[RMDB]
RNA sequence: GGGAACGACUCGAGUAGAGUCGAAAAUGAGACAAACACGCUUCACAAUGUGCGGCAAAGAAACAUUGUUUAUGCAAAGGCACUUCGCAAUGUGUGUUCAAACAUUGCUUAUUCAAACACGCUUCACAAAAGAAUCAGUGGUUCGCCACUGAUUCAACAGUCCUUUGAUGUUCGCAUCAAAGGACUGAAAAGAAACAACAACAACAAC
Reactivity to 2A3 in 0.01 (KOAc 150mM, MgCl2 10mM, bicine 150mM(pH8.5), 24C), signal-to-noise 6, nucleotides 027 to 156: u130g020a030g020a040c070a030a160a000c070a020c060g010c000u010u000c010a000c000a010a000u020g000u000g010c010g040g040c050a040a080a080g060a020a050a000c000a000u000u010g080u030u090u130a110u110g060c040a030a070a060g110g000c010a010c020u050u050c050g000c020a010a020u000g020u000g010u010g030u070u170c060a060a070a010c010a020u000u010g010c000u060u110a140u090u120c080a050a100a010c060a020c100g110c020u100u110c080a040c020a140a110a030a040g000a000a000u010c000a000g000u010g030g010u030u060c120g040c030c000a000c000u020g000a000u010u010c000a000a000
Reactivity to DMS in 0.01 (KOAc 150mM, MgCl2 10mM, bicine 150mM(pH8.5), 24C), signal-to-noise 1, nucleotides 027 to 156: u010g020a180g050a120c120a170a090a090c050a070c010g000c000u000u000c060a090c030a040a020u010g000u000g030c040g000g000c060a070a070a070g070a090a020a020c010a050u000u020g050u010u000u000a130u000g050c030a050a080a180g000g000c030a050c010u000u000c130g090c060a140a090u000g000u000g010u000g000u000u000c040a060a040a080c020a020u010u000g020c010u000u010a010u000u020c110a040a060a100c070a090c110g010c000u000u000c050a090c040a040a140a080a130g000a030a000u000c000a000g000u000g020g020u000u000c300g070c020c000a010c000u010g000a020u000u000c000a020a130
Source information: Chemical mapping of a 207-nucleotide RNA with 2A3 and DMS. Conditions: 150 mM KOAc, 10 mM MgCl2 and 150 mM bicine (pH 8.5), 24 C. For DMS the reverse transcriptase was MarathonRT. The DMS profile rests on 2,069 reads.